[RMDB]
RNA sequence: GGGAACGACUCGAGUAGAGUCGAAAAGUAGCUAAAGAUGCUGAUUCCAAAAUCAGCAGUGCUCUGGAGGAAGAACUAGGUGUGACAGAUACAGCAAAAGAGAGACUAAGACACCAUCUGACAAACCCUCUGAUCCAAGGUUCGCCUUGGAUCAGAGAAAAGAAACAACAACAACAAC
Reactivity to DMS in 0.01 (KOAc 150mM, MgCl2 10mM, bicine 150mM(pH8.5), 24C), signal-to-noise 1, nucleotides 027 to 126: g000u010a140g030c010u020a040a230a130g000a100u030g040c000u000g000a030u000u000c160c270a150a050a070a010u000c000a010g020c000a000g070u000g000c020u000c010u010g000g000a140g000g000a060a110g020a010a090c040u010a020g010g050u010g000u010g090a050c060a020g010a100u020a070c070a020g000c050a170a040a080a120g000a040g010a120g000a040c120u000a110a110g000a070c010a010c040c010a000u000c100u000g000a050c120a090a070a170c150c010